[RMDB]
RNA sequence: GGGAACGACUCGAGUAGAGUCGAAAACGGGUAGAUUUGGGGACUUACAGAGCAGGACCACCGAGAGUAACGAUGUGUACGCCAAUACUGCACUGAAGCUGGCUCGCCCAUCUGCCGGCACGGUGCAUAGUCAUUAUAUGUUCGCAUAUAAUGACUAAAAAGAAACAACAACAACAAC
Reactivity to 2A3 in 0.01 (KOAc 150mM, MgCl2 10mM, bicine 150mM(pH8.5), 24C), signal-to-noise 9, nucleotides 027 to 126: c030g010g000g040u080a050g030a180u090u120u160g040g000g000g010a000c010u020u060a050c060a060g060a020g040c030a020g020g040a020c020c020a030c010c040g060a060g000a010g100u060a080a040c070g020a100u090g080u030g020u090a020c030g020c020c000a050a040u100a170c070u050g000c000a000c010u030g060a130a020g000c000u010g010g000c030u040c060g070c000c010c000a040u050c070u090g000c010c000g000g000c010a010c020g010g000u010g000c010a010
Reactivity to DMS in 0.01 (KOAc 150mM, MgCl2 10mM, bicine 150mM(pH8.5), 24C), signal-to-noise 9, nucleotides 027 to 126: c110g010g010g010u000a060g010a090u000u000u000g010g000g010g000a100c100u000u000a090c120a070g000a080g010c050a060g010g000a080c060c030a060c050c040g010a100g010a090g010u010a060a090c090g010a070u000g010u010g010u000a060c100g010c060c070a070a090u010a080c190u000g000c000a020c010u000g000a080a110g030c010u000g010g010c010u010c120g000c040c030c020a070u010c150u000g010c010c010g010g010c010a120c040g000g000u000g010c020a070